[RMDB]
RNA sequence: GGGAACGACUCGAGUAGAGUCGAAAAGAUAUGGAUUGGACCGAUGUGACUCCCAGUGGAGAACAGUUGUCGGAAACGACAAUGGGUUCGAUGAAACUGGGAGGUCACAUCGGUCCAAUCCUAAGUCCAACUUGAUAAUCUUCGGAUUAUCAAGUUGAAAAGAAACAACAACAACAAC
Reactivity to DMS in 0.01 (KOAc 150mM, MgCl2 10mM, bicine 150mM(pH8.5), 24C), signal-to-noise 2, nucleotides 027 to 126: g010a080u000a300u000g010g010a030u000u010g000g000a000c000c010g010a020u010g020u000g000a100c000u000c000c000c000a010g010u000g000g000a030g020a010a010c010a300g010u000u000g000u000c000g020g000a050a110a250c010g010a010c000a010a010u000g020g040g020u000u000c000g000a130u020g000a090a140a050c000u000g010g010g020a020g000g010u010c010a000c010a010u000c010g000g000u010c000c000a010a000u000c010c010u000a010a050g000u000c040